[RMDB]
Record summary
The record gives the reactivity of an RNA of 177 nucleotides to 2A3 and DMS. Reactivities are given for positions 27 through 126. For 2A3, 2,204 sequencing reads were counted. High DMS reactivity at an A or C suggests that its Watson-Crick edge is free. For DMS, 4,293 sequencing reads were counted. High 2A3 reactivity points to a flexible backbone, as in loops and unpaired stretches.
RNA sequence: GGGAACGACUCGAGUAGAGUCGAAAACAGGCCACUGCCAUCUUUCUUGCGGGCGGGGGCGGUGCGAACGGGCGCGACCUCACGGAGGGGACGCCGGCGCCACCAUCUCUCCUCCGGGCGGAAGCGGACUCCCCUGGGAGUUCGCUCCCAGGGGAGUAAAAGAAACAACAACAACAAC
Reactivity to 2A3 in 0.01 (KOAc 150mM, MgCl2 10mM, bicine 150mM(pH8.5), 24C), signal-to-noise 2, nucleotides 027 to 126: c020a010g100g000c030c020a100c080u040g060c010c000a070u080c070u020u150u010c040u060u120g070c110g060g000g000c020g010g000g030g020g000c020g000g010u050g000c080g040a130a070c090g060g070g050c030g010c000g020a020c000c010u020c060a180c050g100g020a010g010g000g000g000a010c060g000c080c000g030g030c020g040c020c010a010c020c020a090u060c030u000c000u000c040c000u020c000c020g000g020g040c040g010g020a000a000g000c030g010g040
Reactivity to DMS in 0.01 (KOAc 150mM, MgCl2 10mM, bicine 150mM(pH8.5), 24C), signal-to-noise 4, nucleotides 027 to 126: c100a130g000g000c030c020a070c050u000g020c010c020a080u010c070u000u010u000c060u000u010g010c150g010g000g000c150g000g000g000g010g020c130g020g030u010g010c060g000a090a090c100g020g000g020c010g010c020g000a300c020c020u000c030a080c090g000g000a040g010g010g000g000a110c130g000c060c020g000g010c040g020c060c040a060c050c040a100u010c100u000c020u000c020c010u000c010c010g000g010g040c300g010g010a070a170g010c070g000g010